[RMDB]
RNA sequence: GGGAACGACUCGAGUAGAGUCGAAAAACUGCGAGCAAUGCGGUGCGCGUUGCCAGCAGAUUCAUGAAACGACCGUACGGCGGGUACGUGAUCUGCCGUUGUUCGAGUACCGGGUGAUGCUGCACGACCCAUCAUAGGUGUUCGCACCUAUGAUGGGAAAAGAAACAACAACAACAAC
Reactivity to 2A3 in 0.01 (KOAc 150mM, MgCl2 10mM, bicine 150mM(pH8.5), 24C), signal-to-noise 2, nucleotides 027 to 126: a000c020u020g000c000g030a040g000c000a030a020u030g010c060g220g060u260g070c110g010c010g020u040u030g000c020c000a000g020c020a000g010a030u070u060c090a060u140g130a100a080a030c040g060a030c060c010g090u100a030c020g050g070c000g000g060g070u070a110c070g130u140g150a060u010c000u000g000c000c010g030u020u060g030u020u030c020g010a020g040u040a060c000c020g000g000g070u070g030a070u070g010c060u020g000c030a020c020g080a100
Reactivity to DMS in 0.01 (KOAc 150mM, MgCl2 10mM, bicine 150mM(pH8.5), 24C), signal-to-noise 3, nucleotides 027 to 126: a070c010u010g010c000g030a300g020c020a020a010u000g020c020g050g020u010g040c060g030c010g010u010u000g020c000c070a300g000c000a010g010a120u000u030c100a110u000g010a090a090a150c060g000a030c060c030g010u000a020c040g040g020c010g010g010g010u000a090c170g030u010g000a040u010c020u000g020c000c000g000u000u010g000u000u000c040g000a120g000u010a110c090c050g000g010g000u000g000a080u000g020c030u000g000c040a070c110g000a190